[RMDB]
RNA sequence: GGGAACGACUCGAGUAGAGUCGAAAAUCUUUUCCUUUGUCCUUUCAGUUUCUUGGCGGAUCUGAUGGAUAACUCAGAGCUCAUCAGAAAUGUGACCCUUUGUGGACAUCUCCACCAUGGCAAGGUAAGACGGAACUUUCAGCUACUUGGAACAGGAGCUAGUGUAGGUCUUCGGACCUACACUAGCAAAAGAAACAACAACAACAAC
Reactivity to 2A3 in 0.01 (KOAc 150mM, MgCl2 10mM, bicine 150mM(pH8.5), 24C), signal-to-noise 2, nucleotides 027 to 156: u030c020u070u080u010u050c030c000u140u060u120g060u080c030c000u040u060u190c070a040g020u040u070u050c060u060u160g060g000c060g040g000a080u010c020u010g000a030u060g040g070a080u080a130a100c020u040c110a070g020a030g070c000u000c030a040u010c000a050g050a090a130a100u050g060u030g120a090c020c010c000u050u120u110g060u090g020g040a080c050a120u130c090u030c040c010a030c010c000a040u070g050g000c050a070a020g020g020u020a030a000g060a010c070g040g040a080a040c000u060u100u100c030a010g020c010u050a080c040u120u070g060g010a060a000c020a100g100g010a010